[RMDB]
RNA sequence: GGGAACGACUCGAGUAGAGUCGAAAAUACUUAGUACGCGCGUAGUUGCAGGCAUUCCGGGUGGAGCAACUGACGCGGAAGACUUUUCCCAGAGUGUGCGCUUCAACUGGCGUGCUGAGUAGUGCACGAAUUGCACGUACGUUCGCGUACGUGCAAACAAAUCUCUAAAUUUCGAUUUAGAGAUUUGAAAAGAAACAACAACAACAAC
Reactivity to 2A3 in 0.01 (KOAc 150mM, MgCl2 10mM, bicine 150mM(pH8.5), 24C), signal-to-noise 5, nucleotides 027 to 156: u060a000c000u010u000a010g010u000a000c010g000c020g000c040g100u060a010g010u020u000g000c020a080g170g010c020a080u100u080c080c070g110g000g050u130g030g060a050g010c020a040a030c010u070g130a100c070g010c070g050g010a020a010g190a160c020u150u150u040u030c000c000c000a010g010a010g020u080g010u010g020c080g000c030u040u030c050a210a250c080u020g020g000c000g000u010g000c010u010g000a010g010u040a000g010u040g010c040a000c060g050a080a090u070u020g000c000a000c000g000u000a010c000g000u010u050c200g000c010g110u000a000c000g000u000g000c010a000a000a000
Reactivity to DMS in 0.01 (KOAc 150mM, MgCl2 10mM, bicine 150mM(pH8.5), 24C), signal-to-noise 3, nucleotides 027 to 156: u000a050c020u010u010a080g020u000a070c010g000c020g020c080g010u000a060g020u000u000g020c020a080g020g000c010a080u010u000c020c160g010g040g110u000g020g000a190g020c010a050a040c030u000g000a060c070g030c060g010g000a130a120g010a150c070u000u000u000u000c000c000c000a190g010a130g040u000g020u000g010c060g020c040u010u010c050a070a090c050u010g020g020c040g030u010g000c000u000g010a060g010u000a060g040u010g030c030a060c020g000a090a160u000u000g000c000a020c010g030u010a010c010g020u000u000c300g050c020g050u000a010c000g000u000g010c000a010a000a100